[RMDB]
RNA sequence: GGGAACGACUCGAGUAGAGUCGAAAAUAAAACAUGGAUACCAUAAACUAUCCGUGAAGGUAGCCAUGAACACGGAUAGUUAAAUAAAAGCUGAGCGUUAGGAAAAACCUAAUGCUCAGCAAAAAAACACUAUAUAUGCGUUCGCGCAUAUAUAGUGAAAAGAAACAACAACAACAAC
Reactivity to 2A3 in 0.01 (KOAc 150mM, MgCl2 10mM, bicine 150mM(pH8.5), 24C), signal-to-noise 1, nucleotides 027 to 126: u090a000a060a000a020c060a060u090g090g010a110u100a160c020c010a080u200a080a120a000c000u010a010u000c000c000g000u000g020a100a130g130g010u040a000g020c000c040a060u150g040a060a000c010a010c020g000g010a000u000a000g010u000u040a000a020a000u080a010a030a000a030g000c010u000g000a000g030c020g010u000u000a000g000g040a080a140a060a220a220c000c010u010a000a000u000g020c000u000c010a000g020c000a000a020a000a000a000a030a000
Reactivity to DMS in 0.01 (KOAc 150mM, MgCl2 10mM, bicine 150mM(pH8.5), 24C), signal-to-noise 2, nucleotides 027 to 126: u000a110a060a150a200c100a060u000g010g030a080u010a140c010c020a070u000a070a000a020c000u010a000u000c020c000g000u000g010a080a070g000g010u010a060g000c130c220a110u000g000a050a100c030a020c010g000g000a000u000a010g000u000u000a000a040a040u000a060a070a080a090g000c000u000g020a000g010c000g040u000u000a000g000g000a060a170a120a140a130c000c000u000a010a000u000g000c000u000c000a000g010c000a000a000a030a060a010a010a010